[RMDB]
RNA sequence: GGGAACGACUCGAGUAGAGUCGAAAAGGAUGCCGAGAAGGAGGCCUGCAACUCAUUUCCCCAUUAGACGUUCUGAGAACACGUGCACCAGCUUCCAAGCUUUCUCCCUCCCGAACCGCCCUGAUUACUUACAACAUCGCUUCGGCGAUGUUGUAAGAAAAGAAACAACAACAACAAC
Reactivity to DMS in 0.01 (KOAc 150mM, MgCl2 10mM, bicine 150mM(pH8.5), 24C), signal-to-noise 2, nucleotides 027 to 126: g020g020a150u000g020c010c020g000a140g070a080a140g050g020a130g040g010c000c040u000g010c040a080a090c060u010c030a090u020u000u000c000c000c010c030a130u060u010a030g000a100c080g000u000u020c000u000g000a180g000a150a090c150a090c070g000u000g020c000a090c050c060a050g000c080u030u000c020c030a050a170g010c010u030u010u000c130u000c000c040c040u040c000c000c040g000a090a100c110c060g010c000c000c020u000g000a130u060u000a120
Reactivity to 2A3 in 0.01 (KOAc 150mM, MgCl2 10mM, bicine 150mM(pH8.5), 24C), signal-to-noise 3, nucleotides 027 to 126: g060g020a050u060g010c020c030g030a000g050a120a020g080g030a030g000g060c010c010u040g000c010a060a050c030u030c080a110u050u030u020c000c020c010c000a080u080u150a060g030a050c050g030u060u080c090u080g100a070g010a090a020c060a020c070g040u040g000c010a030c080c010a020g010c010u020u020c010c010a060a020g000c000u040u090u000c030u030c000c000c000u000c000c020c000g000a020a010c020c010g000c000c000c020u010g040a040u050u090a080